[RMDB]
RNA sequence: GGGAACGACUCGAGUAGAGUCGAAAAGAUAUGGAUCUCCAGGACAUGUCGACUCGGAAACGAGAUUCGACAACAGCCUGUGAGAUCCUAAGUCAGCCGUCAAUACGUCUUCGGACGUAUUGACGAAGAGGGAAAGAUACUUCGGUAUCUUUCCCUCAAAAGAAACAACAACAACAAC
Reactivity to DMS in 0.01 (KOAc 150mM, MgCl2 10mM, bicine 150mM(pH8.5), 24C), signal-to-noise 4, nucleotides 027 to 126: g000a030u000a290u010g000g010a000u000c010u000c000c000a020g020g020a100c140a150u000g010u000c000g000a030c010u000c000g000g000a070a040a190c010g000a020g000a210u010u000c000g010a010c000a040a090c260a170g000c010c000u000g010u010g010a010g000a000u000c000c000u010a000a040g010u000c020a210g010c140c000g010u000c000a000a000u010a000c000g000u000c000u010u010c210g030g000a020c000g010u010a000u000u000g000a000c000g000a020a030
Reactivity to 2A3 in 0.01 (KOAc 150mM, MgCl2 10mM, bicine 150mM(pH8.5), 24C), signal-to-noise 3, nucleotides 027 to 126: g020a010u020a020u060g000g000a000u000c000u000c000c000a010g020g010a160c150a300u130g020u020c000g000a020c000u000c000g000g000a040a040a030c020g000a000g010a130u140u070c000g020a000c000a030a050c060a020g100c000c010u030g020u160g000a000g000a010u000c000c000u000a010a000g020u010c020a020g090c030c010g000u000c000a010a000u000a010c000g010u000c010u030u100c300g100g000a000c000g000u000a000u010u000g000a000c000g000a060a020

Source information: The record gives the reactivity of an RNA of 177 nucleotides to DMS and 2A3. The DMS profile rests on 3,881 reads. The RNA was probed in 150 mM KOAc, 10 mM MgCl2 and 150 mM bicine (pH 8.5) at 24 C. For DMS the reverse transcriptase was MarathonRT. Reactivities are given for positions 27 through 126. For 2A3 the reverse transcriptase was SuperScript II with manganese. The 2A3 profile rests on 6,909 reads.